Structure probing data (DMS and 2A3) for a 177-nucleotide construct. For DMS the reverse transcriptase was MarathonRT. Source: RMDB library RFMREP, as collected in RNAgym.
RNA sequence: GGGAACGACUCGAGUAGAGUCGAAAACGUUCACCUUUUGCUUUACAUGUAUCGCGAAAUGUAAACACUUAUUCAACCAAUUGAUGUCUUCCCGUUAACAAGGCCGAGCUUAAAUUUAAGCUCGGUUGAAAUAUAUACCGUUCGCGGUAUAUAUUUCAAAAGAAACAACAACAACAAC
Reactivity to DMS in 0.01 (KOAc 150mM, MgCl2 10mM, bicine 150mM(pH8.5), 24C), signal-to-noise 4, nucleotides 027 to 126: c170g000u000u000c040a030c030c030u000u000u010u000g010c010u000u010u000a020c050a140u000g020u000a010u010c090g020c010g010a000a020a030u010g010u000a050a020a020c030a090c120u000u000a130u000u000c020a040a060c050c020a110a100u000u000g010a030u000g010u000c040u000u000c000c000c000g000u000u010a050a070c180a090a110g000g000c010c010g000a030g010c000u010u000a020a270a200u010u010u000a010a010g000c000u000c000g000g000u000u000
Reactivity to 2A3 in 0.01 (KOAc 150mM, MgCl2 10mM, bicine 150mM(pH8.5), 24C), signal-to-noise 7, nucleotides 027 to 126: c040g010u020u020c030a100c020c000u020u030u020u040g020c010u070u020u030a030c040a140u170g050u070a040u040c020g000c010g030a030a020a010u030g000u030a020a040a000c020a020c050u120u130a110u160u060c010a030a030c010c010a080a180u050u080g020a030u190g030u000c010u020u000c000c000c000g050u080u100a090a050c060a110a040g100g020c010c010g010a000g000c020u070u020a100a300a300u300u300u060a020a020g000c000u000c000g010g000u000u000